Structure probing data (2A3 and DMS) for a 177-nucleotide construct. For DMS, 2,582 sequencing reads were counted.

RNA sequence: GGGAACGACUCGAGUAGAGUCGAAAACAGAUAACGUUCAGGAUUAGUCGCAUAUCGCCUCCAGCGGUAGCGCAAGCCUACCGCGUGAGGGGUAAGCAGGGGUGCUCGGCGGCCGACGAUCCGAGUAGCUUGUAGACACAUUCGUGUGUCUACAAGCAAAAGAAACAACAACAACAAC
Reactivity to 2A3 in 0.01 (KOAc 150mM, MgCl2 10mM, bicine 150mM(pH8.5), 24C), signal-to-noise 2, nucleotides 027 to 126: c000a020g140a090u120a140a030c090g040u050u080c080a060g010g030a130u070u180a070g070u050c040g010c080a030u030a030u100c110g090c200c000u000c010c020a010g000c000g020g000u000a000g000c050g000c060a020a040g000c000c010u010a000c000c000g000c000g030u040g000a050g000g000g000g000u010a000a050g000c030a030g000g010g010g070u050g000c020u010c040g010g020c010g030g030c050c040g040a040c030g010a000u030c020c020g010a010g020u030a030
Reactivity to DMS in 0.01 (KOAc 150mM, MgCl2 10mM, bicine 150mM(pH8.5), 24C), signal-to-noise 3, nucleotides 027 to 126: c070a160g000a080u010a080a110c130g010u010u010c110a120g010g000a070u000u000a080g040u010c050g020c040a090u000a050u030c030g010c000c000u000c010c100a100g020c000g010g000u010a000g000c020g010c190a060a110g020c300c050u000a010c000c000g010c010g000u000g000a050g000g010g000g000u000a020a050g040c070a120g000g000g010g020u000g010c040u000c010g000g000c060g000g030c060c100g000a040c090g000a070u010c010c010g000a040g000u000a080
DMS adducts were read by reverse transcription with MarathonRT.